Structure probing data (2A3 and DMS) for a 207-nucleotide construct. The 2A3 profile rests on 3,159 reads. 2A3 adducts were read by reverse transcription with SuperScript II with manganese. The reactions ran in a buffer of 150 mM KOAc, 10 mM MgCl2 and 150 mM bicine (pH 8.5), at 24 C. Reactivities are given for positions 27 through 156. The DMS profile rests on 4,835 reads.
RNA sequence: GGGAACGACUCGAGUAGAGUCGAAAAGCGAUAGCUUCGGCUAUCGCAAAAAGAUAUGGAAGGAGUUUAUGGCGUAUUCGAAGAACUCGGAAACGAGGGAGAAUACGAACUACCAUAGAUCCUUCCUAAGUCAAAAAGGCGGGAUUCGUCCCGCCAAUAUCUCGUUUAGAUUCGUCUAAACGAGAUAAAAAGAAACAACAACAACAAC
Reactivity to 2A3 in 0.01 (KOAc 150mM, MgCl2 10mM, bicine 150mM(pH8.5), 24C), signal-to-noise 2, nucleotides 027 to 156: g030c010g000a000u020a010g010c030u060u050c220g080g000c000u010a000u010c000g020c000a000a000a000a000a000g030a040u070a020u060g000g000a000a000g020g020a060g100u020u080u010a010u000g010g010c020g000u000a000u000u010c030g060a170a050g020a030a090c000u000c000g010g020a060a070a000c000g000a000g010g000g010a040g020a000a000u000a000c000g010a010a030c020u100a030c000c000a000u000a000g020a000u020c000c000u000u000c000c000u000a000a000g000u000c020a000a000a040a090a130g010g000c010g020g000g010a000u070u090c160g040u020c070c010c000g000c000c000a000a000
Reactivity to DMS in 0.01 (KOAc 150mM, MgCl2 10mM, bicine 150mM(pH8.5), 24C), signal-to-noise 2, nucleotides 027 to 156: g020c000g000a010u000a030g020c010u000u010c300g090g040c020u010a010u000c000g030c000a010a010a040a140a100g000a130u000a260u000g000g010a030a040g010g000a060g020u000u010u010a000u000g000g010c030g010u000a030u000u000c000g010a100a230g030a130a300c000u010c010g000g000a110a120a260c000g000a010g010g000g000a240g050a080a030u010a010c000g000a030a070c020u000a150c010c000a030u000a040g020a030u000c000c000u010u010c000c000u000a000a090g010u000c020a090a080a100a180a070g010g000c000g000g010g000a060u000u000c070g000u000c000c010c050g000c000c000a000a020